Chemical mapping of a 177-nucleotide RNA with 2A3 and DMS.
RNA sequence: GGGAACGACUCGAGUAGAGUCGAAAAGGCUAGUGACAAAUGCAGCGACUUUCGGGGAAACGGGCAUUGAAAUAAGGAAGGAACAGCAUGUCGAAGGUGCUGGUCACCGGAUUCGGACCCUACGGCGCAUGUAACAAUUUUUCGAAAUUGUUACAUGAAAAGAAACAACAACAACAAC
Reactivity to 2A3 in 0.01 (KOAc 150mM, MgCl2 10mM, bicine 150mM(pH8.5), 24C), signal-to-noise 9, nucleotides 027 to 126: g060g000c050u070a020g050u030g100a060c050a050a110a040u130g010c020a030g040c010g060a080c050u060u100u090c070g010g000g000g040a010a080a040c030g020g030g000c050a060u060u140g100a070a080a060u250a060a030g060g030a040a050g030g030a040a020c010a000g030c010a010u070g070u230c090g080a090a040g080g010u030g030c000u020g020g030u080c020a040c060c000g030g000a010u080u050c020g030g020a060c000c000c010u030a040c050g050g000c030g000
Reactivity to DMS in 0.01 (KOAc 150mM, MgCl2 10mM, bicine 150mM(pH8.5), 24C), signal-to-noise 9, nucleotides 027 to 126: g010g000c030u000a050g020u020g020a080c100a070a080a080u010g010c050a070g000c040g000a090c080u000u010u010c040g010g010g000g000a050a090a090c090g010g000g000c050a070u030u020g000a050a060a070u030a120a110g000g010a110a080g000g000a040a060c030a040g010c040a030u000g010u010c150g010a110a080g010g020u010g000c010u000g000g000u010c040a070c030c020g010g010a150u000u010c020g000g000a120c030c020c020u000a070c090g000g000c090g000

Record summary
In probing experiments dimethyl sulfate is read out at A N1 and C N3, which are open when not base-paired. The DMS profile rests on 40,265 reads. The 2A3 profile rests on 17,449 reads. 2A3 adducts were read by reverse transcription with SuperScript II with manganese. Source: RMDB library OK1LIB, as collected in RNAgym. As a SHAPE reagent, 2A3 marks flexible, mostly unpaired nucleotides at the ribose 2'-OH.